[RMDB]
RNA sequence: GGGAACGACUCGAGUAGAGUCGAAAAGGGGACGACAACUCUGGGGAGAGAAGGGAGGGUCGGAUGGGAAGAGUAAAUCCUACGGGAAUCCCCCGGUUCCCCUUAUGUCCAGCCCCUCCCCGGUCCGAUGCGUCUACGUUCGCGUAGACGAAAAGAAACAACAACAACAAC
Reactivity to 2A3 in 0.01 (KOAc 150mM, MgCl2 10mM, bicine 150mM(pH8.5), 24C), signal-to-noise 7, nucleotides 027 to 129: g000g000g000g000a010c020g020a010c040a100a060c060u030c060u110g020g000g050g000a080g010a020g040a090a110g020g000g030a130g010g000g000u040c020g020g040a110u130g020g010g010a070a020g080a040g090u190a040a070a030u010c000c010u020a040c070g030g010g020a040a120u080c000c000c000c000c000g000g010u030u020c020c000c000c000u030u070a100u100g020u020c000c010a020g010c010c020c000c000u030c000c000c000c000g020g020u020c000c020g030a050u120g030
Reactivity to DMS in 0.01 (KOAc 150mM, MgCl2 10mM, bicine 150mM(pH8.5), 24C), signal-to-noise 7, nucleotides 027 to 129: g040g030g010g010a090c170g030a010c130a070a120c090u040c060u000g030g040g030g020a030g030a020g020a100a130g010g020g000a070g040g040g040u020c020g000g000a050u050g000g030g020a050a090g020a130g060u070a080a070a110u000c000c040u060a060c130g010g020g030a080a110u040c030c020c000c010c010g000g030u020u020c030c010c010c080u000u040a010u000g030u030c000c020a130g000c050c010c040c010u000c030c000c000c020g000g000u020c020c030g030a070u010g020
An RNA of 170 nucleotides, treated with 2A3 and DMS and read out base by base. For DMS the reverse transcriptase was MarathonRT.